Chemical mapping of a 177-nucleotide RNA with 2A3 and DMS.
RNA sequence: GGGAACGACUCGAGUAGAGUCGAAAAGCGGGUAACUUCGGUUACCCGCAAAGACGCGUCUCGUCGCGUCGCCGUCGCGUCGCCGCGCGUCGCGUCGCGAGAAAAGGACGAAGUUCGCUUCGUCCAAGUACUAUAAAUGCUUCGGCAUUUAUAGUACAAAAGAAACAACAACAACAAC
Reactivity to 2A3 in 0.01 (KOAc 150mM, MgCl2 10mM, bicine 150mM(pH8.5), 24C), signal-to-noise 8, nucleotides 027 to 126: g010c000g010g010g010u040a010a000c010u050u110c180g080g010u040u000a010c010c000c000g000c000a000a000a000g000a000c010g010c000g020u010c010u010c060g060u040c010g000c000g000u010c000g000c020c050g300u140c160g000c010g020u020c020g010c040c020g030c000g000c020g040u030c010g000c000g000u010c010g000c040g020a100g110a030a130a020a040g000g000a000c000g000a010a000g010u030u130c200g040c130u010u000c000g000u000c000c000a000a010
Reactivity to DMS in 0.01 (KOAc 150mM, MgCl2 10mM, bicine 150mM(pH8.5), 24C), signal-to-noise 8, nucleotides 027 to 126: g010c000g010g000g000u000a000a010c000u000u010c220g030g010u000u000a010c000c000c000g010c000a000a020a050g000a030c030g010c020g010u000c050u000c050g020u000c300g020c010g000u000c010g010c030c280g010u000c080g010c000g020u000c030g010c070c110g010c040g010c090g010u000c040g010c000g010u000c010g020c120g000a090g000a060a060a120a130g000g000a020c000g010a010a010g010u000u010c220g010c000u000u000c000g010u000c000c000a020a040